[RMDB]
RNA sequence: GGGAACGACUCGAGUAGAGUCGAAAAGACCGCGAAACUCCAGAUCUUCAGCGAGCUCGCGCGGGACGAGGACGAAUGACCGUCGCCGAACUGAUCGAGAAGCUGUCCGCUCUGCCACCGAGCACCGUCGUCGUGACGGACUCAGAGUUCGGUUACGGGUAAUUGUCCGAUUCGUCGGACAAUUACCAAAAGAAACAACAACAACAAC
Reactivity to 2A3 in 0.01 (KOAc 150mM, MgCl2 10mM, bicine 150mM(pH8.5), 24C), signal-to-noise 2, nucleotides 027 to 156: g030a000c000c010g000c010g030a100a070a060c010u000c020c000a050g050a220u110c100u170u130c110a010g000c030g100a040g060c020u040c050g060c030g030c020g000g020g000a040c060g020a070g000g020a010c010g050a080a130u260g040a120c050c040g040u010c010g020c070c000g000a030a060c030u010g060a090u100c070g010a010g000a040a030g040c060u040g080u080c040c020g000c000u020c000u040g060c010c000a120c150c050g040a030g030c070a110c090c000g040u100c010g070u050c030g080u160g000a000c000g000g010a050c000u000c030a010g030a000g040u010u050c020g020g000u000u050a010c020g020
An RNA of 207 nucleotides, treated with 2A3 and read out base by base. The reactions ran in a buffer of 150 mM KOAc, 10 mM MgCl2 and 150 mM bicine (pH 8.5), at 24 C.